About this RNA:
The data come from the RNA Mapping Database (RMDB), library RFM100. Chemical mapping of a 177-nucleotide RNA with DMS and 2A3. The RNA was probed in 150 mM KOAc, 10 mM MgCl2 and 150 mM bicine (pH 8.5) at 24 C. Values cover nucleotides 27 to 126. DMS adducts were read by reverse transcription with MarathonRT. The 2A3 profile rests on 1,111 reads.
RNA sequence: GGGAACGACUCGAGUAGAGUCGAAAAGCACUGCUCUUUACAUGGCCCGACGUGAGGGCACUUCGCGGGCAGUGCUGCGGCCUCGUGUGGGAUCGCGUCAGGACUGAAGGAGAGCGAAUCCCGGGGCAUUCCGUUCUCCGUUCGCGGAGAACGGAAUAAAAGAAACAACAACAACAAC
Reactivity to DMS in 0.01 (KOAc 150mM, MgCl2 10mM, bicine 150mM(pH8.5), 24C), signal-to-noise 2, nucleotides 027 to 126: g000c010a050c020u010g000c000u000c000u030u020u070a250c300a200u020g000g000c000c000c000g000a130c300g000u070g030a240g000g010g000c000a030c040u000u000c130g030c300g000g000g000c020a000g000u020g000c000u020g020c220g010g000c000c000u010c010g000u000g090u100g000g050g000a010u000c000g020c010g000u000c010a130g030g000a100c070u070g040a210a080g000g000a050g040a220g000c010g030a040a070u020c020c000c030g040g000g010g030c040
Reactivity to 2A3 in 0.01 (KOAc 150mM, MgCl2 10mM, bicine 150mM(pH8.5), 24C), signal-to-noise 2, nucleotides 027 to 126: g010c000a010c000u000g010c010u000c000u060u270u090a040c080a040u110g040g000c000c000c000g100a230c120g110u250g080a150g030g000g090c090a140c000u110u120c020g040c080g000g000g000c000a000g000u000g010c000u000g000c000g060g010c020c000u000c070g110u110g010u250g050g040g000a010u010c000g000c010g090u080c040a090g060g170a040c090u120g040a140a080g140g060a110g010a030g000c000g000a030a140u010c000c000c000g000g000g000g020c000